[RMDB]
RNA sequence: GGGAACGACUCGAGUAGAGUCGAAAAGCAACUUAGGAUUUUAGGCUCGCCGUGCGUGUCUCGAACCAUGCCGGGCCAAACCCACGGGGGCUGGCGGUCCCCGUGCGGUCAAAAUCAAACCGCUGGAAAAACAGUUCUAGCUUCGGCUAGAACUGAAGUUUUAGCGCAUGUUCGCAUGCGCUAAAACAAAAGAAACAACAACAACAAC
Reactivity to 2A3 in 0.01 (KOAc 150mM, MgCl2 10mM, bicine 150mM(pH8.5), 24C), signal-to-noise 1, nucleotides 027 to 156: g000c030a000a050c100u170u160a070g070g070a220u110u070u090u210a060g000g000c010u000c000g000c050c010g010u030g000c050g030u070g060u040c060u030c250g050a030a020c030c010a000u010g030c070c000g040g000g000c000c010a030a030a060c000c000c000a000c010g000g040g000g000g000c000u000g000g000c010g000g000u000c000c000c000c000g030u000g000c030g000g000u040c020a070a020a070a170u100c010a070a110a100c020c000g020c020u030g040g000a130a120a010a000a000c000a000g010u000u000c000u000a000g040c000u080u000c240g050g010c000u000a000g000a000a000c000u000g000a000a000
This 207-nucleotide RNA was probed chemically with 2A3. Values cover nucleotides 27 to 156.